This 177-nucleotide RNA was probed chemically with 2A3. The 2A3 profile rests on 488 reads. Reactivities are given for positions 27 through 126. For 2A3 the reverse transcriptase was SuperScript II with manganese.

[RMDB]
RNA sequence: GGGAACGACUCGAGUAGAGUCGAAAAACAAUCGUCCAUGAUCCUUGACGAGACAGGUAAAGCAGCUAUCAAAUGCUGCAGCUCUCUCCACGUCGAGGAACUGGCUGCUUUACCUAUGCGGGGUAUCGCGCGCACCAUAGUUCGCUAUGGUGCGCGCAAAAGAAACAACAACAACAAC
Reactivity to 2A3 in 0.01 (KOAc 150mM, MgCl2 10mM, bicine 150mM(pH8.5), 24C), signal-to-noise 1, nucleotides 027 to 126: a000c030a020a130u300c170g080u100c070c000a060u070g010a070u000c000c000u020u020g020a000c070g020a000g070a000c000a020g110g020u140a160a000a000g000c000a000g000c010u180a070u170c020a020a010a120u100g030c000u030g000c000a000g000c000u030c000u000c000u000c100c000a210c020g030u070c000g000a000g070g000a050a050c000u000g040g000c000u020g000c000u010u090u020a000c000c000u040a020u150g080c080g000g050g000g010u000a020u150c030